[RMDB]
RNA sequence: GGGAACGACUCGAGUAGAGUCGAAAAGACUCGCCGCCCGAGCCCGAGCAUGGGCCCCAGUUCCGAACGAAGAGACCGCCGGGGAAGGGGGGCGAACCGACGGGAGUUCAAUGGUAAAGAGGCGAAGAUAGCUGCCUCUUCGGAGGCAGCAAAAGAAACAACAACAACAAC
Reactivity to DMS in 0.01 (KOAc 150mM, MgCl2 10mM, bicine 150mM(pH8.5), 24C), signal-to-noise 2, nucleotides 027 to 129: g020a140c140u010c000g020c050c070g000c040c060c000g000a300g000c000c010c020g040a110g000c000a250u040g000g000g000c020c040c010c000a080g000u000u030c030c100g040a040a110c160g010a000a010g050a250g000a120c080c080g110c000c080g000g020g060g000a080a130g000g000g000g000g000g000c070g010a020a020c010c040g030a120c110g040g000g000a100g040u030u030c060a020a060u020g080g020u020a000a000a000g030a090g030g000c040g010a000a000g000a120u080a100
Reactivity to 2A3 in 0.01 (KOAc 150mM, MgCl2 10mM, bicine 150mM(pH8.5), 24C), signal-to-noise 2, nucleotides 027 to 129: g050a020c000u000c030g020c000c040g050c000c000c050g010a000g100c010c000c000g010a010g000c040a100u260g000g000g000c020c000c000c000a040g040u120u110c050c010g030a020a000c020g040a040a090g060a010g010a040c040c000g080c000c050g080g010g000g000a030a000g000g040g000g000g020g000c020g010a010a010c000c000g030a020c000g010g010g010a000g030u060u090c080a050a050u080g070g000u070a040a030a000g050a040g020g000c020g050a070a000g010a020u160a040
The record gives the reactivity of an RNA of 170 nucleotides to DMS and 2A3. As a SHAPE reagent, 2A3 marks flexible, mostly unpaired nucleotides at the ribose 2'-OH. Source: RMDB library 15KLIB, as collected in RNAgym. The RNA was probed in 150 mM KOAc, 10 mM MgCl2 and 150 mM bicine (pH 8.5) at 24 C.